[RMDB]
Structure probing data (DMS and 2A3) for a 177-nucleotide construct. Reactivities are given for positions 27 through 126. For 2A3 the reverse transcriptase was SuperScript II with manganese. Conditions: 150 mM KOAc, 10 mM MgCl2 and 150 mM bicine (pH 8.5), 24 C. The 2A3 profile rests on 908 reads. Values are in units of 0.01, from 0 to 300, in steps of 10.
RNA sequence: GGGAACGACUCGAGUAGAGUCGAAAAUUGAGUCCGGGACUAGUGAGGAUUUAGGCUUUCCUCCACAAAGUUGCGGAUGGGCUUCAGUAACCACGGUGUCUAAUCAAAAUUAUAAAGUAGUUACCCAUGAACAGGACAAAUUCGUUUGUCCUGUUCAAAAAGAAACAACAACAACAAC
Reactivity to DMS in 0.01 (KOAc 150mM, MgCl2 10mM, bicine 150mM(pH8.5), 24C), signal-to-noise 2, nucleotides 027 to 126: u020u000g010a140g010u000c020c000g030g020g030a020c030u000a170g010u000g000a040g010g010a040u010u000u000a150g010g030c170u010u000u000c010c000u020c040c050a060c110a070a120a090g010u000u020g010c010g000g000a000u000g030g000g000c030u000u000c060a060g000u000a050a040c110c080a080c090g010g000u020g000u010c020u010a060a070u010c070a030a050a080a080u030u000a090u000a070a070a130g010u010a040g010u010u000a100c010c020c010a150
Reactivity to 2A3 in 0.01 (KOAc 150mM, MgCl2 10mM, bicine 150mM(pH8.5), 24C), signal-to-noise 1, nucleotides 027 to 126: u080u060g070a020g020u010c020c010g000g020g000a000c010u070a010g030u010g090a040g020g000a000u050u030u120a100g150g040c020u060u010u000c010c000u000c050c000a020c030a060a230a000g000u000u210g160c040g000g000a030u050g080g030g000c020u140u130c080a050g020u100a030a040c030c030a000c000g020g000u030g020u020c050u080a070a050u100c040a070a090a020a040u150u140a250u140a190a110a000g070u050a020g010u020u080a180c070c020c000a050